Chemical mapping of a 207-nucleotide RNA with 2A3 and DMS.
For DMS the reverse transcriptase was MarathonRT.
In probing experiments dimethyl sulfate is read out at A N1 and C N3, which are open when not base-paired.
Conditions: 150 mM KOAc, 10 mM MgCl2 and 150 mM bicine (pH 8.5), 24 C.
Reactivities are given for positions 27 through 156.
It was measured as part of the RMDB library RNAMAK.
[RMDB]
RNA sequence: GGGAACGACUCGAGUAGAGUCGAAAAGGGGUCCGUCCCGUUUGACGGUUUCGACAUGCUCUCAUGGUCUGAAGCCUCCACGGACCAUGGAGCAACAGCGAAACCCGAGGGACGGACGGAGGCACCCAAAAGUUACUCUAACUUCGGUUAGAGUAACGUACAACAGAAAGUUCGCUUUCUGUUGUACAAAAGAAACAACAACAACAAC
Reactivity to 2A3 in 0.01 (KOAc 150mM, MgCl2 10mM, bicine 150mM(pH8.5), 24C), signal-to-noise 8, nucleotides 027 to 156: g060g010g030g010u010c010c000g010u000c000c010c010g010u150u120u260g100a030c010g000g070u000u000u000c130g050a220c170a230u300g000c010u020c020u030c010a000u000g000g010u000c000u000g020a070a020g020c000c000u000c000c000a030c010g010g000a000c000c000a000u000g000g000a000g000c020a060a020c030a040g010c000g000a000a000a000c000c000c010g030a130g000g000g010a000c010g000g000a000c000g000g000a000g010g000c000a050c000c010c000a040a170a000a020g000u000u000a000c000u000c000u010a010a010c000u030u100c300g080g000u010u000a000g000a000g000u000a000a000c000
Reactivity to DMS in 0.01 (KOAc 150mM, MgCl2 10mM, bicine 150mM(pH8.5), 24C), signal-to-noise 3, nucleotides 027 to 156: g020g020g020g010u000c000c010g000u000c000c000c010g010u000u000u000g010a180c140g010g000u000u000u000c010g000a060c050a260u000g020c020u010c040u000c010a010u000g020g020u020c000u000g030a070a110g010c020c010u000c000c020a300c040g020g000a010c000c000a030u000g010g000a040g010c000a060a040c090a110g020c010g000a050a040a020c000c000c020g000a300g020g000g000a040c020g010g000a000c010g010g010a040g050g060c010a120c010c000c010a060a080a130a150g010u000u000a010c000u000c000u000a000a020c000u000u000c300g040g010u000u000a010g000a020g010u000a000a010c000